Structure probing data (DMS and 2A3) for a 177-nucleotide construct.
For DMS the reverse transcriptase was MarathonRT.
2A3 adducts were read by reverse transcription with SuperScript II with manganese.
The reactions ran in a buffer of 150 mM KOAc, 10 mM MgCl2 and 150 mM bicine (pH 8.5), at 24 C.
For 2A3, 3,322 sequencing reads were counted.
2A3 is a SHAPE reagent: it acylates the 2'-hydroxyl of flexible nucleotides of all four kinds.

[RMDB]
RNA sequence: GGGAACGACUCGAGUAGAGUCGAAAAGAAUGGGGCCAUAUCUAGCGAAGAAGCCCCGAGCUAGUUAUGGACUGACGAAAAAGGGCCGAAAAGGGAUCCUAGCAGGCCCGCUUGGAUCCGUCAGGAAGGUAAUGAGAAUCUUCGGAUUCUCAUUACCAAAAGAAACAACAACAACAAC
Reactivity to DMS in 0.01 (KOAc 150mM, MgCl2 10mM, bicine 150mM(pH8.5), 24C), signal-to-noise 4, nucleotides 027 to 126: g010a110a080u040g010g000g020g000c000c000a010u000a000u000c000u000a000g010c030g000a240a100g020a130a180g000c100c010c000c000g000a170g000c000u000a010g000u000u000a010u000g000g000a150c010u010g020a070c060g010a030a080a060a110a160g000g000g020c000c020g000a050a110a090a080g000g010g020a060u020c020c020u000a060g000c210a200g010g000c010c030c030g020c080u040u010g020g000a060u000c040c020g000u020c030a030g000g030a150a070
Reactivity to 2A3 in 0.01 (KOAc 150mM, MgCl2 10mM, bicine 150mM(pH8.5), 24C), signal-to-noise 3, nucleotides 027 to 126: g170a030a120u220g010g010g090g020c010c000a010u000a010u020c000u010a000g010c010g050a110a050g070a130a060g200c010c000c000c000g000a000g000c000u000a000g000u010u010a000u020g020g000a050c060u040g020a030c020g100a050a050a030a030a060g030g000g000c110c090g100a080a050a030a070g070g020g010a010u030c000c000u000a020g000c040a010g090g070c000c000c000g010c000u010u030g000g000a010u020c040c000g020u050c050a030g060g110a060a130